Structure probing data (DMS and 2A3) for a 207-nucleotide construct. For DMS, 2,552 sequencing reads were counted. The data come from the RNA Mapping Database (RMDB), library M2RFPK. Conditions: 150 mM KOAc, 10 mM MgCl2 and 150 mM bicine (pH 8.5), 24 C.

[RMDB]
RNA sequence: GGGAACGACUCGAGUAGAGUCGAAAAUGUGCUCUGAAUGGAGUGCUCUACUGAGAUUAUAAAAUAGAAGGUAAGCUAUUAUCUCUUACAACAGGGCAGGGCUUGUUGGAAUAGGCGGUAAAGUCUAAAAACUACCUCACCUUCGGGUGAGGUAGAACCCUUAUCACUAGUUCGCUAGUGAUAAGGGAAAAGAAACAACAACAACAAC
Reactivity to DMS in 0.01 (KOAc 150mM, MgCl2 10mM, bicine 150mM(pH8.5), 24C), signal-to-noise 2, nucleotides 027 to 156: u000g040u000g010c010u000c010u000g010a190a170u010g020g000a110g010u000g020c000u010c040u000a060c060u010g030a200g000a120u010u010a200u010a060a060a060a140u010a080g000a140a150g070g010u000a050a080g010c070u000a000u000u000a080u010c000u000c010u000u000a080c020a060a140c030a120g030g010g020c040a030g020g000g020c040u010u010g030u010u010g060g000a060a090u010a060g010g000c060g020g040u000a030a030a120g040u000c040u000a040a060a030a070a170c010u000a010c000c030u000c000a000c010c000u000u000c300g040g020g030u030g000a000g000g000u000a000g010a000a080
Reactivity to 2A3 in 0.01 (KOAc 150mM, MgCl2 10mM, bicine 150mM(pH8.5), 24C), signal-to-noise 4, nucleotides 027 to 156: u130g020u050g000c000u000c000u050g160a120a090u170g020g020a010g010u040g000c000u030c030u060a060c050u070g020a020g030a100u110u110a080u270a200a100a150a050u090a040g050a100a010g050g040u100a050a000g020c020u020a060u140u070a090u150c030u000c020u050u050a080c030a120a010c000a070g020g010g000c010a010g030g020g000c030u020u020g000u010u010g030g010a080a080u050a020g000g010c030g020g040u110a090a090a020g020u040c030u040a030a050a010a030a030c000u000a000c010c000u010c010a010c000c000u010u030c170g060g000g000u000g000a000g000g000u000a000g000a000a000